[RMDB]
Annotation: The record gives the reactivity of an RNA of 207 nucleotides to 2A3 and DMS. The reactions ran in a buffer of 150 mM KOAc, 10 mM MgCl2 and 150 mM bicine (pH 8.5), at 24 C. For 2A3, 2,916 sequencing reads were counted. DMS (dimethyl sulfate) methylates the pairing face of unpaired adenines and cytosines. For DMS, 2,113 sequencing reads were counted. 2A3 adducts were read by reverse transcription with SuperScript II with manganese.

RNA sequence: GGGAACGACUCGAGUAGAGUCGAAAACCGUAGGUUCAGAACUACGAAAUGACAUUUCAUCGAUCUAGGCUUCGAAAGAGGCCUAGGGAGAAAUGUACAUUUCGCUGAACCUAAACGGAAAUUCAUUGCAGUACAGUUCGCUGUACUGCAAUGAAAACUUAAGUGAACUCUUCGGAGUUCACUUAAGAAAAGAAACAACAACAACAAC
Reactivity to 2A3 in 0.01 (KOAc 150mM, MgCl2 10mM, bicine 150mM(pH8.5), 24C), signal-to-noise 2, nucleotides 027 to 156: c010c000g010u000a020g000g000u000u010c010a010g020a210a120c150u170a050c300g010a010a000a000u000g000a000c010a010u010u010u010c150a270u300c060g050a020u000c000u010a000g010g000c010u000u000c010g090a160a040a100g000a030g020g000c020c010u000a000g010g000g000a040g000a000a000a000u020g010u020a220c000a000u010u000u000c000g000c000u010g000a000a000c010c000u000a040a070a000c010g020g040a120a100a020u040u010c000a000u000u000g030c000a000g000u000a000c000a000g020u040u080c140g120c130u000g000u000a000c010u010g000c000a000a000u000g000a000a000a000a000
Reactivity to DMS in 0.01 (KOAc 150mM, MgCl2 10mM, bicine 150mM(pH8.5), 24C), signal-to-noise 1, nucleotides 027 to 156: c000c020g010u000a010g020g010u000u010c000a160g010a200a280c070u010a180c050g010a010a000a010u010g010a080c010a000u000u000u000c000a300u000c120g020a100u000c000u000a010g020g010c000u000u000c040g010a180a120a300g000a020g020g000c010c010u010a000g020g000g000a090g010a000a000a010u000g040u010a100c000a020u000u000u000c000g000c000u010g030a000a040c010c000u000a000a030a080c010g010g010a100a090a160u000u000c000a020u000u000g020c000a030g000u010a000c000a040g010u000u020c300g070c000u000g020u010a040c000u010g020c010a010a000u000g000a010a030a110a170